[RMDB]
RNA sequence: GGGAACGACUCGAGUAGAGUCGAAAAUACCGAGCGAAGGAUACCGGUAAGGGGAGAGGAGGAAUCCCGAGGGGAUCGCCCACUAAAGAGUAGAGGAAUUCUCGGAAAGCUCUCCCAAGAAGAACCAUGAGGCAAAAGUUCGCUUUUGCCAAAAGAAACAACAACAACAAC
Reactivity to DMS in 0.01 (KOAc 150mM, MgCl2 10mM, bicine 150mM(pH8.5), 24C), signal-to-noise 5, nucleotides 027 to 129: u040a130c000c000g010a100g030c130g040a040a030g030g030a040u050a080c050c000g020g050u050a070a060g000g000g000g000a070g000a030g000g000a000g000g000a100a090u000c040c000c010g020a020g010g030g030g010a070u020c070g030c000c000c000a090c110u040a050a070a050g040a070g000u010a040g000a050g050g000a030a050u030u010c030u020c020g030g020a070a050a080g020c030u030c000u000c020c020c010a050a090g000a100a030g000a070a110c030c010a080u070g030a300
Reactivity to 2A3 in 0.01 (KOAc 150mM, MgCl2 10mM, bicine 150mM(pH8.5), 24C), signal-to-noise 6, nucleotides 027 to 129: u130a010c020c010g010a030g020c080g040a060a020g020g010a010u050a060c000c010g040g050u070a070a080g030g000g010g000a010g000a020g010g010a010g000g040a010a050u010c010c010c010g010a040g000g020g010g010a020u040c040g070c010c010c010a040c020u110a100a130a050g100a030g020u150a020g010a030g040g040a030a040u100u010c030u010c000g040g000a060a020a010g010c010u000c010u000c000c010c000a010a000g070a020a000g020a020a020c020c040a040u160g030a030

Structure probing data (DMS and 2A3) for a 170-nucleotide construct. Conditions: 150 mM KOAc, 10 mM MgCl2 and 150 mM bicine (pH 8.5), 24 C. For DMS the reverse transcriptase was MarathonRT.